[RMDB]
Notes: An RNA of 177 nucleotides, treated with DMS and 2A3 and read out base by base. DMS adducts were read by reverse transcription with MarathonRT. The RNA was probed in 150 mM KOAc, 10 mM MgCl2 and 150 mM bicine (pH 8.5) at 24 C. 2A3 adducts were read by reverse transcription with SuperScript II with manganese.

RNA sequence: GGGAACGACUCGAGUAGAGUCGAAAAUAUUUACGUGUUUAAGCCUGGGGAGAGGUGUAAUAGCGAGAACCAGGUGUAGGCAUUAUGAGCUGGUCGUUUUUGUACUGGUUUAACUGAUUCAUGGAGUUAUACCAGUAAAUUUCGAUUUACUGGUAUAAAAAGAAACAACAACAACAAC
Reactivity to DMS in 0.01 (KOAc 150mM, MgCl2 10mM, bicine 150mM(pH8.5), 24C), signal-to-noise 8, nucleotides 027 to 126: u030a060u010u020u020a100c160g010u000g000u000u000u000a110a280g010c010c000u000g010g000g000g010a240g010a090g010g010u000g010u010a080a080u030a220g000c020g010a080g010a300a250c030c010a010g010g010u010g000u000a090g000g010c020a020u000u010a070u000g010a080g020c040u000g010g000u000c040g000u010u010u010u010u010g000u010a040c050u000g000g010u000u000u010a060a100c100u000g000a120u010u010c090a100u010g000g010a090g000u000
Reactivity to 2A3 in 0.01 (KOAc 150mM, MgCl2 10mM, bicine 150mM(pH8.5), 24C), signal-to-noise 9, nucleotides 027 to 126: u140a050u070u190u090a060c060g010u020g030u020u060u030a040a000g000c000c000u010g000g000g030g010a170g020a070g020g090u040g020u080a100a140u090a060g110c160g050a090g010a080a010c000c000a000g000g000u020g010u010a010g000g000c010a000u070u100a090u220g060a030g020c040u030g020g020u010c030g040u040u050u050u150u200g060u080a020c020u020g020g050u020u030u040a070a030c030u050g090a160u140u110c060a070u170g070g020a050g030u020

The data come from the RNA Mapping Database (RMDB), libraries RFM100 and RFMREP.